[RMDB]
RNA sequence: GGGAACGACUCGAGUAGAGUCGAAAAGAUAUGGAAUUUAUGACGCAACAGCGUUUCCUCGGAAACGAGGACUGACGACAUGCGUCAGGAAUUCCUAAGUCAAAAGCUCAUUCUUCGGAAUGAGCAAGGUAACAACACUCUUCGGAGUGUUGUUACCAAAAGAAACAACAACAACAAC
Reactivity to DMS in 0.01 (KOAc 150mM, MgCl2 10mM, bicine 150mM(pH8.5), 24C), signal-to-noise 2, nucleotides 027 to 126: g040a050u020a260u000g000g000a020a000u000u000u000a130u000g010a010c000g010c020a020a170c290a270g010c000g000u010u020u000c000c020u000c000g040g000a170a040a150c020g050a000g000g010a010c300u000g020a030c000g040a060c120a120u020g000c000g000u050c000a070g000g000a000a000u000u010c000c010u000a020a030g000u010c040a050a120a120a080g000c010u000c000a000u000u010c000u000u010c220g060g020a020a020u000g000a020g020c000a020a010
Reactivity to 2A3 in 0.01 (KOAc 150mM, MgCl2 10mM, bicine 150mM(pH8.5), 24C), signal-to-noise 1, nucleotides 027 to 126: g000a020u080a040u100g000g000a010a030u000u030u030a130u070g010a000c010g000c020a170a300c100a300g070c020g000u010u040u000c000c010u030c000g000g010a080a110a050c000g020a000g000g030a010c080u140g040a000c020g000a040c090a230u300g020c000g000u000c000a110g000g020a000a010u010u010c000c000u020a060a020g030u010c010a060a060a090a060g000c000u000c000a010u000u000c020u040u120c300g170g020a010a000u010g000a000g000c000a000a000